[RMDB]
RNA sequence: GGGAACGACUCGAGUAGAGUCGAAAAGUAUCCCUAGAUGAUAAAACACCGCACAUGGCUCGUAAGAGCGGUUAAAUUAGCAAGUAAUGCAAAUUACGCGAGGUAACGCAUGGCCUAGGCUCGUGAGAAAAGGGAGAAUCCUUCGGGAUUCUCCCAAGACAACAAUUAACUUCGGUUAAUUGUUGUCAAAAGAAACAACAACAACAAC
Reactivity to 2A3 in 0.01 (KOAc 150mM, MgCl2 10mM, bicine 150mM(pH8.5), 24C), signal-to-noise 4, nucleotides 027 to 156: g060u040a080u060c000c000c000u020a060g040a200u110g020a050u170a130a120a020a030c050a010c020c030g030c000a030c000a150u080g050g000c020u040c070g050u090a070a040g040a010g050c030g000g000u020u110a030a050a120u110u100a030g010c050a080a040g070u190a140a030u080g040c030a030a020a120u140u090a060c050g010c020g040a030g040g120u080a040a020c040g000c070a060u080g040g010c000c030u020a030g040g000c000u020c050g030u030g020a100g120a020a110a020a020g010g000g000a000g000a000a000u000c000c000u010u050c120g010g000g000a000u000u000c000u000c000c000c000a000a000
Reactivity to DMS in 0.01 (KOAc 150mM, MgCl2 10mM, bicine 150mM(pH8.5), 24C), signal-to-noise 3, nucleotides 027 to 156: g020u010a090u010c010c000c010u010a100g010a160u010g010a140u000a050a080a140a160c050a070c060c020g020c030a130c080a130u010g020g020c040u000c040g010u000a090a140g010a090g020c000g010g020u000u000a030a050a140u000u000a110g020c070a110a180g030u000a100a060u000g010c130a060a080a080u000u000a030c020g000c060g000a080g020g000u000a050a090c070g010c070a050u000g020g010c000c010u000a130g020g010c010u010c020g000u010g010a140g020a030a070a060a140g000g020g040a030g000a030a010u010c000c000u010u000c240g040g010g010a020u000u010c000u000c000c000c010a000a000

The record gives the reactivity of an RNA of 207 nucleotides to 2A3 and DMS. For DMS, 6,481 sequencing reads were counted.